[RMDB]
RNA sequence: GGGAACGACUCGAGUAGAGUCGAAAAGAUAUGGAAGCCGUUAGGAACCCUUUGGGACAUGCCUAUAUGGUCGGAAACGACCAGAAAGGCAACAGCCCACGGAGGGUUCCUAACGGCUUCCUAAGUCGAUCACAAUAUACUUCGGUAUAUUGUGAUCAAAAGAAACAACAACAACAAC
Reactivity to DMS in 0.01 (KOAc 150mM, MgCl2 10mM, bicine 150mM(pH8.5), 24C), signal-to-noise 1, nucleotides 027 to 126: g020a140u000a300u010g000g010a030a000g020c000c020g060u000u010a000g000g020a050a000c000c000c000u010u000u020g000g030g020a020c050a230u000g000c000c000u000a090u000a180u000g000g000u020c000g000g020a140a210a250c000g000a000c000c000a010g010a100a260a030g020g020c010a000a070c190a190g000c000c000c020a150c300g030g000a020g000g030g020u000u000c000c000u010a000a000c000g010g010c010u000u000c000c000u000a010a090g020u000c170